[RMDB]
RNA sequence: GGGAACGACUCGAGUAGAGUCGAAAAGGUGAAAGCGAAUAGGGGAAGAUAAGCUAGCAGCAAAAAGGAACCGAUUCCCACCAAGUUCGGAAAGAGAUACCGGGCGAGGCGCUGAAGAAAGAAUCUCAAACUCCCGCAAGUUUCGACUUGCGGGAAACAAUCCAUUGACCUUCGGGUCAAUGGAUUGAAAAGAAACAACAACAACAAC
Reactivity to 2A3 in 0.01 (KOAc 150mM, MgCl2 10mM, bicine 150mM(pH8.5), 24C), signal-to-noise 1, nucleotides 027 to 156: g020g010u040g080a070a030a000g030c010g020a090a040u060a080g070g000g020g030a010a100g040a140u130a080a010g050c010u070a020g050c010a000g000c010a000a080a130a090a080g030g020a020a000c000c040g050a060u030u030c040c000c000a010c000c020a040a010g020u030u000c010g000g000a060a100a100g050a080g000a000u030a060c000c000g000g000g000c000g000a030g010g000c060g000c060u060g020a050a020g040a060a060a020g050a050a110u010c010u000c030a100a020a060c040u020c000c000c000g000c000a000a000g000u020u090u200c160g080a040c000u000u000g010c000g000g000g000a000a000a000
Source: RMDB library M2RFPK, as collected in RNAgym. Structure probing data (2A3) for a 207-nucleotide construct. For 2A3 the reverse transcriptase was SuperScript II with manganese. The reactions ran in a buffer of 150 mM KOAc, 10 mM MgCl2 and 150 mM bicine (pH 8.5), at 24 C. For 2A3, 854 sequencing reads were counted.